An RNA of 177 nucleotides, treated with DMS and 2A3 and read out base by base. The 2A3 profile rests on 5,382 reads. It was measured as part of the RMDB library RFMREP. Values cover nucleotides 27 to 126. Conditions: 150 mM KOAc, 10 mM MgCl2 and 150 mM bicine (pH 8.5), 24 C.
[RMDB]
RNA sequence: GGGAACGACUCGAGUAGAGUCGAAAAGGCAUUCUGAAGACCUGAAGUCUAGGCAACGUACGGGAGACGUAGUUCUUCAAUCACAUGACGCCUAGGGGAAAGUCCCCGGAUCUCGGGUAGAAAGUGCGCAUUAUUGAAAGUUCGCUUUCAAUAAUGCAAAAGAAACAACAACAACAAC
Reactivity to DMS in 0.01 (KOAc 150mM, MgCl2 10mM, bicine 150mM(pH8.5), 24C), signal-to-noise 5, nucleotides 027 to 126: g020g000c020a020u000u010c090u000g010a150a160g000a050c030c020u000g000a070a090g010u000c010u000a040g010g020c010a100a290c090g020u010a070c300g020g010g000a010g000a020c020g030u010a080g010u010u010c000u000u000c000a050a120u000c150a090c070a070u000g010a130c300g020c010c010u010a050g000g010g000g000a120a080a160g010u000c020c010c010c050g000g000a050u000c070u000c020g020g000g000u000a030g000a130a090a060g020u000g000c090
Reactivity to 2A3 in 0.01 (KOAc 150mM, MgCl2 10mM, bicine 150mM(pH8.5), 24C), signal-to-noise 3, nucleotides 027 to 126: g050g010c010a030u060u030c040u120g070a120a060g020a040c000c020u010g020a040a000g040u010c020u060a020g010g000c020a060a020c040g050u070a010c080g010g040g000a020g010a010c040g140u130a060g050u110u000c000u010u000c000a050a210u100c030a040c020a090u080g080a040c080g000c000c000u020a030g010g000g010g010a020a200a090g090u100c010c000c000c000g020g020a010u020c040u020c060g000g000g000u030a030g070a080a100a010g050u040g030c060